[RMDB]
RNA sequence: GGGAACGACUCGAGUAGAGUCGAAAACAAGGAGUGUGUUCGCACACUCCUUGAGUACGUCUUAAUAGCCUUACGGACUGUGUAUGUAUAGUGAGUUGCAACCGGUGUAGAUUCGUCUACACCGGAACUUGCUUCUUGUAUUCGUACAAGAAGCAAGAAAAGAAACAACAACAACAAC
Reactivity to 2A3 in 0.01 (KOAc 150mM, MgCl2 10mM, bicine 150mM(pH8.5), 24C), signal-to-noise 1, nucleotides 027 to 126: c010a000a000g040g000a020g010u010g010u050g000u100u180c240g020c100a000c000a020c000u000c000c000u010u000g000a000g020u040a020c030g070u000c000u020u130a110a060u080a170g070c030c010u000u070a070c040g050g020a060c070u070g050u040g070u230a120u260g140u030a040u050a170g090u070g120a110g030u090u120g040c010a040a080c010c000g010g050u030g000u000a000g010a040u050u090c190g040u000c070u000a000c020a010c000c000g000g020a020a000
Reactivity to DMS in 0.01 (KOAc 150mM, MgCl2 10mM, bicine 150mM(pH8.5), 24C), signal-to-noise 4, nucleotides 027 to 126: c000a010a000g000g000a030g020u000g030u000g030u000u010c300g030c000a020c000a000c000u010c000c000u000u000g010a080g000u000a070c130g010u000c060u000u000a090a110u020a110g000c020c030u000u010a090c140g010g000a040c020u010g000u000g020u000a050u020g000u000a070u000a090g010u010g010a090g010u000u000g010c080a110a200c010c000g000g020u000g000u000a000g010a030u000u010c190g000u000c000u000a000c000a010c000c000g000g000a010a020
Description: Conditions: 150 mM KOAc, 10 mM MgCl2 and 150 mM bicine (pH 8.5), 24 C. The record gives the reactivity of an RNA of 177 nucleotides to 2A3 and DMS. For DMS the reverse transcriptase was MarathonRT. The 2A3 profile rests on 999 reads. Source: RMDB library RFMREP, as collected in RNAgym.